RNA sequence: GGGAACGACUCGAGUAGAGUCGAAAAUGGUGGACAUCUGUGAGCCUCACCUUGUGCACAGUAUUUAAAAUCAACCAACAAUAAAGAACAACAGCAUCAAAGGUAAAGAGCAAGUUAUCAGGAUUGCCAUCUGGCCAGGAUUCGUCCUGGCCAGAUGAAAAGAAACAACAACAACAAC
Reactivity to 2A3 in 0.01 (KOAc 150mM, MgCl2 10mM, bicine 150mM(pH8.5), 24C), signal-to-noise 1, nucleotides 027 to 126: u140g020g020u000g000g000a000c030a090u070c050u060g060u030g060a020g040c000c000u030c010a030c000c010u080u010g010u050g070c040a010c040a020g020u040a200u050u180u150a100a120a010a050u030c020a000a060c050c010a010a090c040a080a090u230a280a090a020g090a040a030c010a000a000c000a080g000c010a010u000c080a160a010a000g000g040u060a200a100a000g050a010g000c050a090a000g000u120u050a140u160c000a010g060g060a060u010u110g000c000
Reactivity to DMS in 0.01 (KOAc 150mM, MgCl2 10mM, bicine 150mM(pH8.5), 24C), signal-to-noise 1, nucleotides 027 to 126: u000g010g010u000g000g000a100c130a050u010c030u000g010u010g000a110g030c050c000u000c100a060c110c030u000u000g010u010g000c030a070c040a100g000u000a070u000u010u000a020a100a070a080u030c130a170a140c060c050a070a050c170a030a090u010a090a140a120g010a030a120c020a020a100c030a040g030c090a010u050c080a020a030a050g000g020u000a020a060a120g010a060g000c070a020a050g000u010u010a090u000c010a180g000g010a090u000u000g000c180
Chemical mapping of a 177-nucleotide RNA with 2A3 and DMS.
The 2A3 profile rests on 775 reads.
2A3 adducts were read by reverse transcription with SuperScript II with manganese.